[RMDB]
RNA sequence: GGGAACGACUCGAGUAGAGUCGAAAAAAAACAUUCUUGGAGAUAAUUCUUCUAUGCCAAUUCCAUGUUCUGGGCAUGCAAAUUUAGUUGAAAAAAGAAUUUCUUCUCCAUCUAUUAUUUGGGCUAUAAUCCCGUAUAGGUUCGCCUAUACGGGAUUAAAAGAAACAACAACAACAAC
Reactivity to 2A3 in 0.01 (KOAc 150mM, MgCl2 10mM, bicine 150mM(pH8.5), 24C), signal-to-noise 2, nucleotides 027 to 126: a000a000a020a010c090a010u170u060c060u020u050g000g000a010g000a010u070a180a020u000u060c050u000u050c030u030a050u070g030c030c030a060a050u000u090c080c020a090u130g010u070u090c210u180g030g030g060c020a000u030g000c010a030a080a120u050u300u150a140g010u080u220g060a060a040a070a060a000a000g000a000a000u000u030u010c040u070u000c000u050c050c000a040u100c010u090a100u070u020a080u160u200u160g060g020g030c000u000a000u000
Structure probing data (2A3) for a 177-nucleotide construct.